[RMDB]
RNA sequence: GGGAACGACUCGAGUAGAGUCGAAAAUAAAACAUGGUUACCAUAUUGAUUCCCACAAGGUAGCCAUGAGUGGGAAUCAAAAUAUAAAACCUGAGCGUUAGGAAAAACCUAAUGCUCAGCAAAAAAAUCAUCAGUUAAGUUUCGACUUAACUGAUGAAAAAGAAACAACAACAACAAC
Reactivity to 2A3 in 0.01 (KOAc 150mM, MgCl2 10mM, bicine 150mM(pH8.5), 24C), signal-to-noise 2, nucleotides 027 to 126: u100a010a080a000a030c030a010u020g030g010u040u010a020c000c010a030u040a180u280u050g030a030u000u040c010c040c020a010c010a060a050g020g000u000a020g040c000c020a010u020g010a010g080u090g000g110g040a030a040u160c040a100a010a210a010u230a020u040a050a080a000a040c000c000u000g000a000g010c010g000u000u000a010g000g020a110a090a070a150a150c000c000u000a010a010u000g000c000u010c000a000g000c010a010a050a020a000a010a000a060
Reactivity to DMS in 0.01 (KOAc 150mM, MgCl2 10mM, bicine 150mM(pH8.5), 24C), signal-to-noise 1, nucleotides 027 to 126: u010a120a100a120a230c000a000u000g000g030u010u000a040c040c000a140u030a100u020u000g010a240u000u010c000c000c000a180c020a050a070g000g030u000a000g000c020c010a050u030g000a130g030u010g000g000g000a210a110u000c060a010a020a070a100u010a060u000a110a070a120a100c200c020u000g000a010g000c000g000u000u050a000g010g000a050a120a060a140a090c000c000u000a000a030u000g000c050u000c000a010g000c030a000a000a020a090a010a010a060